The data come from the RNA Mapping Database (RMDB), library OK3TST. Chemical mapping of a 207-nucleotide RNA with 2A3 and DMS. Values are in units of 0.01, from 0 to 300, in steps of 10.
[RMDB]
RNA sequence: GGGAACGACUCGAGUAGAGUCGAAAAUUAUCUGUCUUUUUGAUUAUAGCCAUCCUAGUGGGCAUGAAAUGUUAUCUCACAGUGGUUUUGAUUUGCAUUUCUCUCGUGGCCGAUGAGGUUGGUUGUGUUAGUCCAUUUGCAUCGCUAUAAAGGAAUAACGAUGUUUACUUUUCGAAGUAAACAUCGUAAAAGAAACAACAACAACAAC
Reactivity to 2A3 in 0.01 (KOAc 150mM, MgCl2 10mM, bicine 150mM(pH8.5), 24C), signal-to-noise 2, nucleotides 027 to 156: u150u070a080u060c050u090g150u020c040u030u150u040u060u180g100a100u060u120a040u050a020g010c020c020a010u020c010c030u020a040g070u040g020g000g040c060a060u060g000a000a050a010u030g000u080u100a030u020c030u000c010a040c070a170g130u120g130g000u180u110u070u040g050a030u020u050u050g010c000a010u000u020u000c020u000c000u000c050g040u060g060g020c020c020g040a050u090g070a040g100g000u010u030g030g030u030u070g020u020g030u010u060a020g000u010c020c030a040u000u000u070g010c020a020u040c020g000c030u030a010u080a110a120a090g140g070a090a070u280a050
Reactivity to DMS in 0.01 (KOAc 150mM, MgCl2 10mM, bicine 150mM(pH8.5), 24C), signal-to-noise 2, nucleotides 027 to 156: u010u010a060u000c040u000g030u000c010u000u000u020u000u010g010a110u000u000a060u010a080g000c020c020a030u000c050c040u000a110g030u010g020g030g010c060a120u000g010a020a060a050u000g000u000u010a030u000c040u010c020a080c100a210g060u000g030g020u000u000u000u020g010a090u010u000u000g040c010a050u010u000u000c020u000c070u010c100g040u000g000g020c020c010g020a080u010g020a110g020g030u010u000g020g020u000u000g050u000g000u010u010a110g000u010c040c030a100u010u020u010g020c050a080u000c050g010c040u000a100u000a040a070a180g010g020a080a070u010a140